[RMDB]
RNA sequence: GGGAACGACUCGAGUAGAGUCGAAAAGAUCCUCGCCUUUAUUCACUGGGGACGACAACUCUGGGGAGAAAAGGGAGGAUCGGAUGGGAAGAGUAUAUCCUACGGGAAUCCCCCGGUCCCUCUCACGGUAGCGCCCUGUUCGCAGGGCGCAAAAGAAACAACAACAACAAC
Reactivity to 2A3 in 0.01 (KOAc 150mM, MgCl2 10mM, bicine 150mM(pH8.5), 24C), signal-to-noise 3, nucleotides 027 to 129: g020a000u010c000c000u000c070g300c000c000u020u000u000a080u030u050c080a080c210u020g000g000g010g050a050c170g040a020c050a110a090c010u000c010u050g010g000g010g010a040g020a010a010a000a000g000g000g000a010g000g000a010u000c010g000g050a080u050g000g010g030a080a080g050a040g120u080a030u030a050u100c010c010u000a060c050g020g000g050a080a060u050c010c000c000c020c010g000g000u000c000c000c000u040c000u020c000a050c040g090g010u060a000
Reactivity to DMS in 0.01 (KOAc 150mM, MgCl2 10mM, bicine 150mM(pH8.5), 24C), signal-to-noise 2, nucleotides 027 to 129: g070a050u000c010c010u020c010g000c010c030u030u020u020a150u090u000c010a020c000u020g000g000g000g000a100c140g060a220c300a140a070c030u040c000u040g070g020g010g020a070g040a070a030a000a080g000g060g000a070g000g000a000u000c000g020g000a060u020g010g010g000a030a090g050a040g040u060a190u070a000u040c000c000u000a100c140g010g040g020a070a090u070c050c010c020c000c010g070g000u020c000c000c000u030c080u000c070a100c140g040g040u090a080
Chemical mapping of a 170-nucleotide RNA with 2A3 and DMS. 2A3 adducts were read by reverse transcription with SuperScript II with manganese. Source: RMDB library 15KLIB, as collected in RNAgym. For 2A3, 5,936 sequencing reads were counted. The RNA was probed in 150 mM KOAc, 10 mM MgCl2 and 150 mM bicine (pH 8.5) at 24 C. Reactivities are rounded to 0.1 and cut off at 0 and 3. For DMS the reverse transcriptase was MarathonRT.